[RMDB]
RNA sequence: GGGAACGACUCGAGUAGAGUCGAAAAGAUAUGGAGCAUAGUGGAGCUGCAUUCGGAAACGAAUGACAGCGUUGAAACUAGUGCUCCUAAGUCAAAAGAUAGGACUUACUUCGGUAAGUCCUAUCAACCCGUACCUUAAGUUCGCUUAAGGUACGGGAAAAGAAACAACAACAACAAC
Reactivity to DMS in 0.01 (KOAc 150mM, MgCl2 10mM, bicine 150mM(pH8.5), 24C), signal-to-noise 1, nucleotides 027 to 126: g010a030u000a020u000g000g010a000g000c010a050u000a000g000u000g000g000a030g010c000u000g010c000a000u000u000c010g020g010a000a000a040c000g010a040a010u010g000a090c000a010g040c000g010u000u010g010a070a190a040c000u000a000g010u010g000c020u010c000c000u000a000a070g000u000c010a120a120a130a220g000a010u000a000g010g010a020c000u010u000a000c000u000u020c230g010g020u000a000a000g010u000c000c000u010a010u000c010a120a160
Reactivity to 2A3 in 0.01 (KOAc 150mM, MgCl2 10mM, bicine 150mM(pH8.5), 24C), signal-to-noise 1, nucleotides 027 to 126: g000a000u010a010u040g000g000a000g030c000a030u000a000g000u000g000g050a020g000c020u030g040c000a010u000u010c000g020g000a000a010a000c010g010a010a000u040g080a190c020a000g000c000g010u070u020g000a000a000a000c000u010a020g290u020g060c000u000c000c000u000a000a000g000u000c000a020a060a020a110g030a010u010a000g030g000a000c020u010u000a020c040u050u220c300g060g000u010a010a010g010u050c010c000u000a000u000c000a000a010